The record gives the reactivity of an RNA of 177 nucleotides to 2A3 and DMS. DMS (dimethyl sulfate) methylates the pairing face of unpaired adenines and cytosines. Conditions: 150 mM KOAc, 10 mM MgCl2 and 150 mM bicine (pH 8.5), 24 C.
RNA sequence: GGGAACGACUCGAGUAGAGUCGAAAAUUCACUCGGCUUCGAGCCGCUGCUAGGAACAGCCUUCGUUACAUACUGCUCUUGACCGUGUGUAAGAGCCAAAUAUGCUUCCUCAAGUGACGCGUGCUCGACUAUCAUGCGUCUUCGGACGCAUGAUAGUAAAAGAAACAACAACAACAAC
Reactivity to 2A3 in 0.01 (KOAc 150mM, MgCl2 10mM, bicine 150mM(pH8.5), 24C), signal-to-noise 2, nucleotides 027 to 126: u030u020c030a030c040u070c050g170g020c080u090u030c020g010a010g000c000c020g020c010u010g010c000u000a000g000g040a070a020c020a030g030c000c000u150u090c110g130u010u060a020c010a020u110a040c050u040g050c010u000c060u040u140g130a120c070c020g070u000g030u050g010u100a000a030g020a010g010c030c050a010a130a050u190a060u100g020c050u000u050c010c000u030c050a070a000g000u050g110a010c080g000c010g060u160g000c000u000c010g010
Reactivity to DMS in 0.01 (KOAc 150mM, MgCl2 10mM, bicine 150mM(pH8.5), 24C), signal-to-noise 2, nucleotides 027 to 126: u000u020c060a080c050u000c060g010g000c220u020u000c050g010a000g000c010c040g020c020u000g080c010u000a070g000g000a040a070c120a050g000c060c040u020u000c150g030u000u000a100c100a090u020a050c040u000g010c030u010c100u020u000g010a050c050c120g050u000g020u000g030u010a040a080g010a030g020c010c170a020a070a080u040a070u010g000c070u000u000c000c030u000c260a060a070g000u000g010a070c100g030c040g040u010g000c010u000c050g010
Source: RMDB library OK2TST, as collected in RNAgym.